[RMDB]
RNA sequence: GGGAACGACUCGAGUAGAGUCGAAAAAGUCCUUCCCGGCGCGCGCCACCAUCGCCAGGGUCAGGCAGGCGUCAGCUCGGUUUCCACCUCUCUACUCCCCAUGGCCAUGCUCGCCCAAAGCGCGAUGAAACUACCACAAGUUCGCUUGUGGUAGUUUAAAAGAAACAACAACAACAAC
Reactivity to 2A3 in 0.01 (KOAc 150mM, MgCl2 10mM, bicine 150mM(pH8.5), 24C), signal-to-noise 5, nucleotides 027 to 126: a000g050u040c010c000u010u020c020c010c000g010g000c020g000c010g000c010g000c020c010a050c010c000a070u050c030g030c030c010a050g040g020g000u090c040a060g030g030c020a020g040g010c010g030u040c040a020g040c020u050c030g050g040u020u050u030c030c020a070c000c010u040c000u010c010u030a060c020u040c020c000c010c010a060u080g030g000c020c000a040u100g020c020u030c040g020c000c010c000a050a120a040g070c100g030c010g010a020u100g080
Reactivity to DMS in 0.01 (KOAc 150mM, MgCl2 10mM, bicine 150mM(pH8.5), 24C), signal-to-noise 4, nucleotides 027 to 126: a090g000u010c010c020u000u000c010c010c010g030g020c030g010c050g010c040g010c020c050a090c090c030a050u010c060g010c030c030a090g030g000g000u000c080a090g000g000c030a070g020g010c040g000u010c040a080g020c010u010c050g010g000u000u000u010c020c040a070c030c020u000c020u000c020u000a090c050u020c020c010c020c020a080u010g000g010c030c050a070u020g000c010u010c080g010c000c020c020a070a120a100g010c040g020c060g000a090u020g000

Conditions: 150 mM KOAc, 10 mM MgCl2 and 150 mM bicine (pH 8.5), 24 C.
Chemical mapping of a 177-nucleotide RNA with 2A3 and DMS.
It was measured as part of the RMDB libraries RFM100 and RFMREP.
2A3 adducts were read by reverse transcription with SuperScript II with manganese.